[RMDB]
RNA sequence: GGGAACGACUCGAGUAGAGUCGAAAAGAUAUGGAAGUAUGACUCCGUCAAGCGAAGAACUCGGAAACGAGGGAGCUUGAUAGGAGCAAUGUACUUCCUAAGUCAAAGGCGUUCUUCGGAACGCCAAGAUGCUAUUUCACUUCGGUGAAAUAGCAUCAAAAGAAACAACAACAACAAC
Reactivity to 2A3 in 0.01 (KOAc 150mM, MgCl2 10mM, bicine 150mM(pH8.5), 24C), signal-to-noise 2, nucleotides 027 to 126: g010a020u080a020u140g000g010a000a000g000u010a010u050g300a190c020u030c000c000g010u010c000a010a000g000c030g210a300a020g010a120a060c000u000c010g000g030a060a060a040c000g030a010g000g020g000a010g000c020u010u010g000a000u060a300g000g010a010g010c000a010a020u150g000u000a000c010u000u000c000c000u000a080a030g070u020c090a160a080a110g000g000c000g000u010u020c000u010u070c250g120g000a040a000c000g000c010c000a010a020
Reactivity to DMS in 0.01 (KOAc 150mM, MgCl2 10mM, bicine 150mM(pH8.5), 24C), signal-to-noise 2, nucleotides 027 to 126: g000a080u000a300u010g000g000a000a010g000u000a000u000g010a040c000u000c010c000g000u000c000a010a000g010c010g030a050a140g000a030a110c000u010c000g010g000a090a040a210c010g000a010g000g000g000a040g010c020u000u000g010a000u000a050g030g000a000g010c040a050a030u000g030u000a000c000u000u000c020c000u000a060a050g010u000c050a070a090a150g040g000c000g040u000u000c000u000u020c230g010g010a000a010c010g010c000c000a000a010